RNA sequence: GGGAACGACUCGAGUAGAGUCGAAAAUUACAGCAGCCUUAGUGGAUAAUUUUGGUGCAGUUUACAGGAAUGCAAACUUCUUCUUAGCAUCACAUCGAAGAAAUUAUGUGGAAAUUCCACAUACAACGUCAUACCCCUCUUUCGAGAGGGGUAUGACAAAAGAAACAACAACAACAAC
Reactivity to 2A3 in 0.01 (KOAc 150mM, MgCl2 10mM, bicine 150mM(pH8.5), 24C), signal-to-noise 3, nucleotides 027 to 126: u140u020a060c000a000g030c000a050g040c020c010u140u100a080g050u100g140g010a090u060a120a170u070u140u140u010g020g000u000g000c010a050g070u020u070u080a060c100a040g130g050a080a050u090g030c060a100a100a040c060u060u030c000u050u000c020u070u040a030g000c000a020u080c020a030c020a080u140c050g040a070a020g040a080a040a060u280u070a010u020g010u030g000g120a140a130a300u210u080c000c000a000c000a000u000a010c010a120a020c110
Reactivity to DMS in 0.01 (KOAc 150mM, MgCl2 10mM, bicine 150mM(pH8.5), 24C), signal-to-noise 1, nucleotides 027 to 126: u060u000a240c100a300g000c000a140g060c080c000u010u030a130g010u060g000g000a080u010a000a070u020u000u000u010g040g080u020g000c070a070g000u000u000u010a010c120a150g010g060a030a020u000g000c250a000a090a040c180u000u030c010u000u000c030u000u000a090g000c110a040u000c100a010c180a110u000c060g020a080a010g000a010a060a070u040u000a000u000g000u000g010g000a030a020a110u070u090c000c000a000c000a000u000a060c300a000a210c130
The record gives the reactivity of an RNA of 177 nucleotides to 2A3 and DMS.
The 2A3 profile rests on 1,576 reads.
DMS adducts were read by reverse transcription with MarathonRT.
The RNA was probed in 150 mM KOAc, 10 mM MgCl2 and 150 mM bicine (pH 8.5) at 24 C.
Reactivities are rounded to 0.1 and cut off at 0 and 3.
The DMS profile rests on 973 reads.